[RMDB]
RNA sequence: GGGAACGACUCGAGUAGAGUCGAAAAGAUAUGGAUAACAUCGCGAUAAGCGUAACAUCGGAAACGAUGUGUACGCUUUUGACGCGAAAUCCUAAGUCAAAGCACGUCACCUUCGGGUGACGUGCAACGGGACAUAUUACUUCGGUAAUAUGUCCCGAAAAGAAACAACAACAACAAC
Reactivity to DMS in 0.01 (KOAc 150mM, MgCl2 10mM, bicine 150mM(pH8.5), 24C), signal-to-noise 2, nucleotides 027 to 126: g010a040u010a300u000g000g000a020u000a050a130c230a130u010c000g040c010g010a170u000a000a020g010c000g010u000a030a020c010a000u000c000g000g000a120a080a150c000g040a010u000g000u000g000u010a010c000g000c010u010u000u010u000g020a120c070g030c000g010a020a100a030u000c000c000u000a080a130g000u000c030a100a110a170g010c000a000c000g000u000c000a020c000c000u000u000c190g010g020g020u010g000a000c010g000u000g000c000a000a020
Reactivity to 2A3 in 0.01 (KOAc 150mM, MgCl2 10mM, bicine 150mM(pH8.5), 24C), signal-to-noise 1, nucleotides 027 to 126: g050a050u070a050u180g010g000a000u040a150a100c060a260u030c000g010c020g070a040u000a080a070g000c010g000u000a000a010c000a010u000c010g010g000a070a030a010c070g000a020u000g030u050g070u030a010c010g000c000u000u000u000u000g020a000c010g000c010g030a040a030a000u010c000c000u070a250a070g050u060c090a160a130a030g030c000a000c030g020u000c000a010c000c000u060u070c220g120g000g000u000g000a000c030g000u010g000c000a000a010